The record gives the reactivity of an RNA of 177 nucleotides to 2A3 and DMS.
[RMDB]
RNA sequence: GGGAACGACUCGAGUAGAGUCGAAAAAUGACUCUUAAUUGAGGAAAUGGGUGAUCCGCAGCCAAAUCCUAAGGACAUUUUAUUGUCUAUGGAUGCAGUUCACAGGCCAGAUGGCAAUGGGUAUCCUCAACGACGAUAUGUUCGCAUAUCGUCGUUGAAAAGAAACAACAACAACAAC
Reactivity to 2A3 in 0.01 (KOAc 150mM, MgCl2 10mM, bicine 150mM(pH8.5), 24C), signal-to-noise 4, nucleotides 027 to 126: a010u120g000a010c000u010c000u030u060a200a140u200u070g010a010g030g150a010a060a090u190g040g010g000u020g030a050u060c010c030g020c050a030g090c010c010a040a110a010u020c000c010u050a060a120g030g000a000c000a000u030u120u110u170a290u280u050g000u000c010u010a050u080g030g000a020u040g000c030a020g030u040u030c030a040c010a060g070g040c030c010a060g060a120u170g060g010c000a050a040u080g010g010g010u090a060u030c000c000u000
Reactivity to DMS in 0.01 (KOAc 150mM, MgCl2 10mM, bicine 150mM(pH8.5), 24C), signal-to-noise 2, nucleotides 027 to 126: a080u010g010a180c030u000c000u000u030a100a200u000u020g000a010g000g000a010a150a050u000g000g020g000u000g010a020u020c040c050g020c020a070g040c060c030a020a170a090u000c040c050u010a060a170g010g000a000c000a020u000u070u060u010a060u030u020g000u000c000u030a300u010g000g030a000u000g030c070a030g000u000u000c050a040c000a130g010g020c000c040a100g020a090u010g020g000c120a030a080u000g000g000g010u000a070u000c000c000u000
Conditions: 150 mM KOAc, 10 mM MgCl2 and 150 mM bicine (pH 8.5), 24 C.